[RMDB]
RNA sequence: GGGAACGACUCGAGUAGAGUCGAAAACUGCUCCGAGGGUCCGGGCGUGGGGCUGGAGCUGGAGCCCCGCGCGCUGCUUUUCCAGCCGCCUGCGGCCGCGCCUUCACCGUCGGGGCGAUAGCGGUGGUCCAUGUAGAUUAUUCGUAAUCUACAUGGAAAAAGAAACAACAACAACAAC
Reactivity to DMS in 0.01 (KOAc 150mM, MgCl2 10mM, bicine 150mM(pH8.5), 24C), signal-to-noise 9, nucleotides 027 to 126: c060u000g010c000u000c000c010g000a040g000g020g010u010c170c120g000g000g010c000g040u000g010g020g010g020c000u000g000g010a220g000c050u000g010g000a050g010c040c040c070c150g010c150g010c100g010c030u000g010c040u000u000u000u000c020c010a030g000c010c040g020c060c030u000g010c030g000g010c010c000g030c020g010c010c010u000u010c300a030c010c000g010u000c010g010g000g000g010c010g010a040u000a060g000c060g010g010u000g010g000
Reactivity to 2A3 in 0.01 (KOAc 150mM, MgCl2 10mM, bicine 150mM(pH8.5), 24C), signal-to-noise 5, nucleotides 027 to 126: c010u030g000c000u000c000c000g010a030g050g010g020u070c090c040g010g020g000c010g000u020g020g040g010g020c010u020g010g010a020g000c020u010g020g040a010g010c030c020c050c050g060c010g010c030g000c050u050g030c000u090u070u120u030c000c000a000g020c010c040g240c060c020u070g020c030g120g120c010c000g010c000g000c000c000u060u060c030a020c020c010g300u010c000g000g000g010g020c040g000a020u100a020g070c090g090g060u130g050g050
An RNA of 177 nucleotides, treated with DMS and 2A3 and read out base by base. The reactions ran in a buffer of 150 mM KOAc, 10 mM MgCl2 and 150 mM bicine (pH 8.5), at 24 C. It was measured as part of the RMDB library OK2TRN. 2A3 adducts were read by reverse transcription with SuperScript II with manganese. Values are in units of 0.01, from 0 to 300, in steps of 10.